The record gives the reactivity of an RNA of 177 nucleotides to DMS and 2A3. The RNA was probed in 150 mM KOAc, 10 mM MgCl2 and 150 mM bicine (pH 8.5) at 24 C. In probing experiments dimethyl sulfate is read out at A N1 and C N3, which are open when not base-paired. Reactivities are given for positions 27 through 126. For 2A3 the reverse transcriptase was SuperScript II with manganese. It was measured as part of the RMDB library OK1LIB. The DMS profile rests on 12,289 reads.
RNA sequence: GGGAACGACUCGAGUAGAGUCGAAAAAUGCCGCAUUCAGCGACGGUCACUCUAGUGGGCGACUGUCUAUCUAGCGUUGACAUCUACAUACUAUAUAGUAAUACCAAUACUCAAGACUACGAAACGGAGCAUUAUUUAGUUUCGACUAAAUAAUGCUAAAAGAAACAACAACAACAAC
Reactivity to DMS in 0.01 (KOAc 150mM, MgCl2 10mM, bicine 150mM(pH8.5), 24C), signal-to-noise 6, nucleotides 027 to 126: a060u020g020c010c010g000c060a130u030u030c170a100g000c160g010a050c050g000g000u000c010a030c020u000c000u010a110g010u030g010g000g020c050g000a060c130u020g000u000c010u000a060u030c050u000a030g000c040g000u000u010g010a040c040a110u030c050u000a050c110a100u030a040c050u020a140u040a100u010a030g010u000a040a060u000a080c080c070a040a080u030a050c060u000c100a060a090g000a100c110u010a060c080g000a070a070a100c100g000g010
Reactivity to 2A3 in 0.01 (KOAc 150mM, MgCl2 10mM, bicine 150mM(pH8.5), 24C), signal-to-noise 9, nucleotides 027 to 126: a000u110g050c020c010g040c050a060u130u120c070a030g040c010g040a020c030g050g010u000c000a010c020u020c010u050a050g040u160g050g010g000c040g120a160c120u130g020u000c000u000a050u010c010u020a010g020c010g030u030u110g020a020c010a050u020c030u060a060c010a100u110a050c040u050a040u080a070u080a240g070u080a100a050u040a150c020c030a060a050u040a060c030u030c070a060a060g050a080c050u060a040c130g130a100a080a020c070g090g040